[RMDB]
RNA sequence: GGGAACGACUCGAGUAGAGUCGAAAACGACGCAGAUGGUGUUGCAUGCCGGUGCGAAGAACGGUGUAUCGAAGAUUGGUUUUGUGAGGACGAGCUACUAUACGCCUGAUCCUCCGACGUUGGCACAUCCACUGCAUUUAUUCGUAAAUGCAGUGGAAAAAGAAACAACAACAACAAC
Reactivity to 2A3 in 0.01 (KOAc 150mM, MgCl2 10mM, bicine 150mM(pH8.5), 24C), signal-to-noise 3, nucleotides 027 to 126: c020g070a020c020g000c020a020g060a220u080g030g020u070g040u120u130g050c050a030u120g010c000c000g040g010u020g000c060g030a060a040g030a110a030c030g020g000u060g000u050a040u120c070g010a020a000g050a140u050u090g060g110u080u100u090u140g180u140g020a030g010g040a010c020g010a010g060c000u050a060c020u040a050u030a160c090g000c000c010u090g020a290u010c000c020u050c010c000g000a020c030g040u070u050g030g000c030a000c000a090
Reactivity to DMS in 0.01 (KOAc 150mM, MgCl2 10mM, bicine 150mM(pH8.5), 24C), signal-to-noise 5, nucleotides 027 to 126: c080g020a150c130g020c060a060g000a110u010g010g020u000g010u010u010g010c080a080u000g010c030c020g020g000u010g000c080g020a060a100g000a080a080c080g000g010u000g010u000a070u000c110g010a080a070g020a070u000u000g010g020u000u000u000u000g020u010g000a020g000g000a030c030g010a040g020c010u000a150c170u000a120u010a070c150g000c000c020u000g010a130u000c000c010u000c010c020g010a060c100g010u010u010g000g010c050a100c120a140
Chemical mapping of a 177-nucleotide RNA with 2A3 and DMS.
Conditions: 150 mM KOAc, 10 mM MgCl2 and 150 mM bicine (pH 8.5), 24 C.
For 2A3 the reverse transcriptase was SuperScript II with manganese.
2A3 is a SHAPE reagent: it acylates the 2'-hydroxyl of flexible nucleotides of all four kinds.